Conditions: 150 mM KOAc, 10 mM MgCl2 and 150 mM bicine (pH 8.5), 24 C. The record gives the reactivity of an RNA of 207 nucleotides to DMS and 2A3.
RNA sequence: GGGAACGACUCGAGUAGAGUCGAAAAUACGGGGUUCGCCCCGUAAAAAAGCGUACUACUAGCGAGAUUAGGACAUGCUCGCUAACUCCCAAAUAGGAGGACCCGAGCAACAGCCUAAUGUCGCUAGUAUCGCAAAAAAUCAACCUUCGGGUUGAAAGAUUCGUAUAUGAUUCGUCAUAUACGAAUCAAAAGAAACAACAACAACAAC
Reactivity to DMS in 0.01 (KOAc 150mM, MgCl2 10mM, bicine 150mM(pH8.5), 24C), signal-to-noise 1, nucleotides 027 to 156: u010a000c000g030g000g020g050u000u000c300g100c000c010c030c000g040u000a000a040a040a090a040a060g000c010g000u010a100c160u030a060c010u000a000g010c030g000a020g000a010u000u000a030g000g010a120c050a270u010g020c000u010c000g010c000u000a010a180c000u010c000c010c010a130a210a180u000a090g040g020a090g010g000a180c300c130c040g000a030g010c010a070a050c070a220g000c000c010u020a020a080u000g010u000c000g020c000u000a000g000u000a000u000c010g040c010a010a010a080a110a100a160u010c030a000a000c030c000u000u000c300g010g010g020u000u020g000a020a070a090
Reactivity to 2A3 in 0.01 (KOAc 150mM, MgCl2 10mM, bicine 150mM(pH8.5), 24C), signal-to-noise 2, nucleotides 027 to 156: u050a000c010g000g000g000g030u010u110c080g220c000c000c000c030g000u030a000a000a000a000a010a000g000c010g040u080a030c030u010a000c000u000a040g000c000g000a040g000a090u010u010a000g000g050a060c120a200u070g000c000u020c000g000c000u010a090a000c010u050c020c010c010a210a300a150u300a160g000g000a000g010g000a000c000c000c030g020a010g000c010a000a030c020a020g030c000c000u010a000a000u010g070u040c000g000c000u000a010g000u000a000u010c000g000c000a090a050a050a000a000a030u050c010a000a000c010c000u020u100c280g130g000g000u000u010g040a070a000a030
For 2A3, 1,935 sequencing reads were counted. Values cover nucleotides 27 to 156. The data come from the RNA Mapping Database (RMDB), library RNAMAK.